[RMDB]
RNA sequence: GGGAACGACUCGAGUAGAGUCGAAAACAUGAUAAUGCUGAAAUAUCUUACGAAUAUACACUCAAGCAUUGGAAAGAGAUAUCUCUCAUAGAAUUUAGAAAGUGCUUUGACUUUGAUCCUGGUGAGGGAAUAGUAUCCGUUUCGACGGAUACUAUUCAAAAGAAACAACAACAACAAC
Reactivity to DMS in 0.01 (KOAc 150mM, MgCl2 10mM, bicine 150mM(pH8.5), 24C), signal-to-noise 7, nucleotides 027 to 126: c050a070u020g020a210u030a010a020u010g000c010u000g000a090a070a030u000a010u000c020u020u040a150c270g010a140a030u000a040u010a090c130a100c150u010c050a100a040g000c020a010u000u000g010g010a110a050a040g000a060g010a100u020a080u030c030u010c020u010c030a080u010a080g000a050a050u020u020u020a070g010a070a050a030g010u010g000c150u020u020u030g010a050c020u010u000u000g000a070u010c010c020u000g000g010u000g000a030g000g010
Reactivity to 2A3 in 0.01 (KOAc 150mM, MgCl2 10mM, bicine 150mM(pH8.5), 24C), signal-to-noise 9, nucleotides 027 to 126: c030a050u120g010a060u110a110a020u070g030c030u020g080a060a090a030u080a030u040c100u140u170a080c070g050a060a010u100a020u020a060c090a040c070u070c070a080a020g010c010a010u010u040g040g070a120a120a040g090a020g030a000u080a100u160c060u000c010u010c040a030u080a110g110a130a080u120u120u090a080g090a070a080a000g040u060g050c070u090u100u170g050a060c020u030u030u110g040a050u080c000c010u060g030g010u050g030a030g000g070